[RMDB]
The record gives the reactivity of an RNA of 177 nucleotides to 2A3 and DMS. The RNA was probed in 150 mM KOAc, 10 mM MgCl2 and 150 mM bicine (pH 8.5) at 24 C.
RNA sequence: GGGAACGACUCGAGUAGAGUCGAAAAUCUCGUGAAUAAAGAACCUAUCCACAAAAUUAUUCACGAGGAACGUUUGGAGUGGAUAGGUACAUCCAGCAUUGGAUGUUAUAUAAGAGUCCAGACGGAAGAUAGUAAGCAGAUUCGUCUGUUUACUAUCAAAAGAAACAACAACAACAAC
Reactivity to 2A3 in 0.01 (KOAc 150mM, MgCl2 10mM, bicine 150mM(pH8.5), 24C), signal-to-noise 9, nucleotides 027 to 126: u050c010u000c000g010u010g020a010a010u070a060a070a040g040a030a020c000c000u000a000u000c000c000a010c030a020a110a030a090u100u040a020u020u010c000a010c010g000a010g010g060a130a060c030g000u010u010u010g010g000a020g000u010g000g000a000u000a000g000g000u000a000c000a000u000c010c000a010g150c170a300u140u160g010g000a000u000g010u050u000a040u000a000u000a020a090g050a010g070u010c000c000a000g000a010c000g020g010a050a030
Reactivity to DMS in 0.01 (KOAc 150mM, MgCl2 10mM, bicine 150mM(pH8.5), 24C), signal-to-noise 8, nucleotides 027 to 126: u050c010u000c000g000u000g010a010a000u000a020a050a130g010a140a040c010c010u010a010u000c010c000a020c030a090a100a100a090u010u010a010u000u000c000a000c000g000a010g000g000a070a050c030g010u000u000u010g000g000a060g010u000g000g000a010u000a000g000g000u000a010c000a000u010c000c000a020g020c300a120u050u000g000g000a010u000g000u000u030a060u030a110u030a110a110g010a150g000u000c000c000a010g000a010c000g000g020a150a120